[RMDB]
Source information: This 207-nucleotide RNA was probed chemically with 2A3. It was measured as part of the RMDB library M2RFPK. High 2A3 reactivity points to a flexible backbone, as in loops and unpaired stretches. Reactivities are given for positions 27 through 156.
RNA sequence: GGGAACGACUCGAGUAGAGUCGAAAAUUAUGGAUGCCACCGUGACGGCUCAAUCACACAAGUGCCAACGAUAACGAGGCGCUCGCUAUUGCUGCGUAACUGACGGCCUGACGGUCUGACGUUACAAAAAACGAAAAGUGGUUCGCCACUUUUCGAAGUCUCACUGCAUGUUCGCAUGCAGUGAGACAAAAGAAACAACAACAACAAC
Reactivity to 2A3 in 0.01 (KOAc 150mM, MgCl2 10mM, bicine 150mM(pH8.5), 24C), signal-to-noise 1, nucleotides 027 to 156: u120u070a110u130g070g060a040u080g030c030c000a010c020c050g050u040g050a080c060g000g050c020u020c040a040a130u050c010a060c010a010c000a190a060g010u000g000c000c000a150a040c100g020a040u150a190a030c030g000a060g050g010c010g040c000u110c030g020c060u130a070u110u150g080c040u090g040c080g010u010a000a030c030u000g020a030c000g020g000c010c000u110g040a010c120g000g000u050c010u000g000a000c000g000u000u030a050c020a000a030a000a000a000a030c000g000a000a000a000a000g000u000g000g040u000u020c070g070c110c010a000c000u000u010u000u030c000g000a070a000